[RMDB]
RNA sequence: GGGAACGACUCGAGUAGAGUCGAAAACUUUGCCGACAUGAACAGCCGGACCAACAUCGCUUACGCCGAAAUGCAGAUCAGCGAGUACACCGCGAAGAUGCAGAACGCCGUACAGCAGGCGCAGAUCCAGAAGCUAGGUGUUCGCACCUAGCUUCUGAAAAGAAACAACAACAACAAC
Reactivity to DMS in 0.01 (KOAc 150mM, MgCl2 10mM, bicine 150mM(pH8.5), 24C), signal-to-noise 1, nucleotides 027 to 126: c130u000u000u000g020c050c060g030a050c020a030u000g000a200a110c130a180g030c000c060g030g010a110c110c020a060a070c120a020u000c040g000c020u000u000a120c030g020c160c020g020a020a120a130u000g000c010a090g010a060u000c150a130g000c000g000a130g000u000a160c130a160c110c020g010c050g000a110a110g000a090u000g000c030a020g020a090a170c020g000c210c000g080u010a060c180a030g030c000a000g010g060c040g020c140a090g040a120u010c050
Source: RMDB library OK2TRN, as collected in RNAgym.
This 177-nucleotide RNA was probed chemically with DMS.
The DMS profile rests on 632 reads.
Values are in units of 0.01, from 0 to 300, in steps of 10.